[RMDB]
RNA sequence: GGGAACGACUCGAGUAGAGUCGAAAAUUUUUGCCAGUUCGCUCCAGGUUUCCCCGGGGAUCCCUGAAGCGCUCCUCCGAGCCGCCUUCUUUUUUCUUUUCUGCUCAGGAGGUCAGGUGUGAACCACAGGAACCACGAGUUUAGUUCCGAGGAACCACUACCUUGUUAACUUCGGUUAACAAGGUAGAAAAGAAACAACAACAACAAC
Reactivity to 2A3 in 0.01 (KOAc 150mM, MgCl2 10mM, bicine 150mM(pH8.5), 24C), signal-to-noise 1, nucleotides 027 to 156: u200u210u140u190u130g250c040c070a100g000u010u040c010g040c020u020c000c040a030g000g000u090u170u050c000c050c050c030g040g040g020g000a010u030c000c000c000u030g050a100a070g220c090g120c180u050c000c000u000c010c010g020a030g020c030c000g070c180c010u140u000c040u150u300u090u040u240u260c050u160u210u040u000c030u170g020c000u010c000a070g000g000a000g010g000u000c040a000g040g000u100g020u030g300a020a050c000c030a070c100a010g000g000a010a010c010c010a020c000g000a010g030u000u040u110a000g000u010u040c000c000g030a060g060g060a040a060c070c040a010